[RMDB]
RNA sequence: GGGAACGACUCGAGUAGAGUCGAAAAUCAAUGCCUACAACAGGUAUUGGGAUGUAGUUCAGCCACAUCAUUGCUAUUUAUGAGGUGUCUUCUGUAGAUCCGAAAUGUGGGACAGAUGAGAGGGAGAACCUAUCCCGCAGUUCGCUGCGGGAUAGGUAAAAGAAACAACAACAACAAC
Reactivity to DMS in 0.01 (KOAc 150mM, MgCl2 10mM, bicine 150mM(pH8.5), 24C), signal-to-noise 1, nucleotides 027 to 126: u000c020a030a030u000g000c000c030u010a130c240a120a120c200a040g000g000u000a020u000u000g000g010g000a100u000g000u020a040g000u010u020c050a040g020c050c020a050c060a050u000c020a050u010u010g020c170u000a040u000u020u000a020u030g010a140g010g010u000g000u000c040u000u000c050u000g030u010a040g000a070u000c060c030g010a050a040a090u000g010u000g020g010g000a110c100a090g000a070u000g010a170g010a070g000g000g000a050g010a110
Reactivity to 2A3 in 0.01 (KOAc 150mM, MgCl2 10mM, bicine 150mM(pH8.5), 24C), signal-to-noise 1, nucleotides 027 to 126: u030c000a020a010u020g000c000c000u010a070c080a300a040c020a140g010g000u020a000u000u020g080g020g000a000u060g100u190a050g000u030u030c020a020g020c020c000a010c000a030u100c000a060u030u060g120c030u140a100u300u190u030a070u120g020a000g080g020u040g020u040c020u300u010c040u070g070u100a020g000a140u000c040c040g040a090a140a060u160g020u110g040g000g030a000c000a030g100a090u040g000a020g020a000g000g070g000a100g060a060
Chemical mapping of a 177-nucleotide RNA with DMS and 2A3. For 2A3 the reverse transcriptase was SuperScript II with manganese. Reactivities are given for positions 27 through 126.